An RNA of 177 nucleotides, treated with 2A3 and DMS and read out base by base.
2A3 adducts were read by reverse transcription with SuperScript II with manganese.
RNA sequence: GGGAACGACUCGAGUAGAGUCGAAAACGACCGCAGUUCGCUGCGGUCGAAAAGAACUGACUACCGUUCGCCUAGCCGGUGUCAGUUUAAGGGCGGAGAAUAAAACCCUGACGUUCGCGUCAGGGAACUGAUAUACCUACUUCGGUAGGUAUAUCAGAAAAGAAACAACAACAACAAC
Reactivity to 2A3 in 0.01 (KOAc 150mM, MgCl2 10mM, bicine 150mM(pH8.5), 24C), signal-to-noise 3, nucleotides 027 to 126: c010g010a000c000c010g050c000a020g000u040u090c180g050c110u000g020c030g000g000u000c000g010a000a020a000a020g020a010a000c000u010g010a000c020u130a070c110c000g040u080u190c040g100c080c090u090a050g070c030c010g000g000u010g000u000c000a000g000u000u040u050a060a050g020g030g050c100g090g070a170g080a160a080u150a140a110a070a080c000c000c000u000g000a000c020g000u040u080c300g000c010g110u020c010a000g000g000g010a010a000
Reactivity to DMS in 0.01 (KOAc 150mM, MgCl2 10mM, bicine 150mM(pH8.5), 24C), signal-to-noise 4, nucleotides 027 to 126: c020g010a020c000c000g020c000a020g000u000u010c170g030c000u000g020c010g010g020u000c010g000a020a020a080a170g000a030a020c000u000g000a020c010u010a020c000c010g000u010u010c100g020c100c060u000a090g010c300c010g000g000u000g010u000c000a000g010u000u000u000a040a130g000g010g010c070g000g000a110g000a100a080u010a060a080a090a110c010c000c000u000g020a010c000g010u000u010c210g010c010g010u000c000a000g000g010g000a010a020

The reactions ran in a buffer of 150 mM KOAc, 10 mM MgCl2 and 150 mM bicine (pH 8.5), at 24 C.